[RMDB]
RNA sequence: GGGAACGACUCGAGUAGAGUCGAAAAUAGGACCUUCUAGCAAAUUCUCAGCCAUGUAAACCGCUAGGCUCUUUCUGUAAAACCUGAGCUUGCAUGCCUAGACUGAAAUUCCACAUGGAGGGCUUGACUGUUCCGCUUAAACAGUACCACAGUUCACCUUAAUAGUACUUUUCGAAGUACUAUUAAGAAAAGAAACAACAACAACAAC
Reactivity to DMS in 0.01 (KOAc 150mM, MgCl2 10mM, bicine 150mM(pH8.5), 24C), signal-to-noise 3, nucleotides 027 to 156: u000a120g020g000a110c010c040u000u000c030u010a250g000c030a080a070a100u000u000c080u000c000a090g020c040c020a080u000g020u010a020a070a060c030c030g010c130u000a040g040g030c010u000c050u000u000u000c100u000g030u010a100a050a030a060c010c000u000g010a060g020c050u000u000g000c020a070u000g020c130c050u000a110g030a110c040u010g010a040a040a120u000u000c020c050a070c080a160u000g000g010a080g030g020g030c020u000u000g010a070c010u000g010u010u000c000c060g000c000u020u000a040a020a030c020a020g000u000a040c120c040a050c080a070g030u000u000c020a100c140
Reactivity to 2A3 in 0.01 (KOAc 150mM, MgCl2 10mM, bicine 150mM(pH8.5), 24C), signal-to-noise 6, nucleotides 027 to 156: u140a020g080g020a040c010c000u020u030c040u060a040g040c050a050a090a200u190u020c050u020c040a020g020c000c020a030u030g020u080a050a100a100c080c040g010c050u020a020g020g030c010u010c000u050u130u020c080u110g170u170a040a060a150a210c010c030u050g030a010g020c010u040u040g000c020a020u060g000c000c030u050a050g030a120c010u030g040a050a050a080u100u020c060c010a030c010a080u080g030g010a010g030g030g000c000u010u020g010a010c000u010g010u030u080c050c030g010c000u010u050a030a020a000c000a010g010u020a040c000c050a090c020a040g040u070u050c020a050c010

The record gives the reactivity of an RNA of 207 nucleotides to DMS and 2A3. 2A3 adducts were read by reverse transcription with SuperScript II with manganese. The reactions ran in a buffer of 150 mM KOAc, 10 mM MgCl2 and 150 mM bicine (pH 8.5), at 24 C. Reactivities are given for positions 27 through 156.